This 177-nucleotide RNA was probed chemically with 2A3 and DMS. The DMS profile rests on 7,325 reads. DMS adducts were read by reverse transcription with MarathonRT. The data come from the RNA Mapping Database (RMDB), library OK2TST. The reactions ran in a buffer of 150 mM KOAc, 10 mM MgCl2 and 150 mM bicine (pH 8.5), at 24 C. For 2A3 the reverse transcriptase was SuperScript II with manganese.
RNA sequence: GGGAACGACUCGAGUAGAGUCGAAAAGAUGCCACAGUUCAUGAGGAUAAGAUUAUUCUUACAUGGACAGCACCAGGAGAUAAUUUUGAUGUUGGAAAAGUUCAACGUUAUAUCAUAAGAAUAAGUGGCAUUCAUUAGUAUUCGUACUAAUGAAUGCAAAAGAAACAACAACAACAAC
Reactivity to 2A3 in 0.01 (KOAc 150mM, MgCl2 10mM, bicine 150mM(pH8.5), 24C), signal-to-noise 5, nucleotides 027 to 126: g040a020u110g010c020c010a040c040a030g000u010u030c010a000u040g000a030g040g030a030u040a090a140g160a250u140u140a050u160u030c010u030u060a110c000a010u000g000g010a000c000a010g020c030a030c020c020a010g130g050a100g050a030u080a090a060u080u140u080u150g030a020u060g030u030u020g050g030a070a130a180a300g120u050u030c010a010a000c010g010u050u030a100u000a000u120c040a060u070a240a030g050a100a080u230a220a030g080u100g110
Reactivity to DMS in 0.01 (KOAc 150mM, MgCl2 10mM, bicine 150mM(pH8.5), 24C), signal-to-noise 6, nucleotides 027 to 126: g010a080u010g010c010c040a100c170a160g010u000u000c010a020u010g000a090g010g000a060u010a050a150g020a150u010u000a070u000u000c010u000u000a130c030a040u000g010g010a040c010a170g010c070a070c010c020a100g010g000a090g000a040u010a030a070u000u000u020u000g000a030u000g010u000u010g010g000a030a100a070a140g010u010u000c010a020a040c020g010u010u000a070u010a050u010c030a060u010a070a080g010a060a070u020a060a100g020u000g010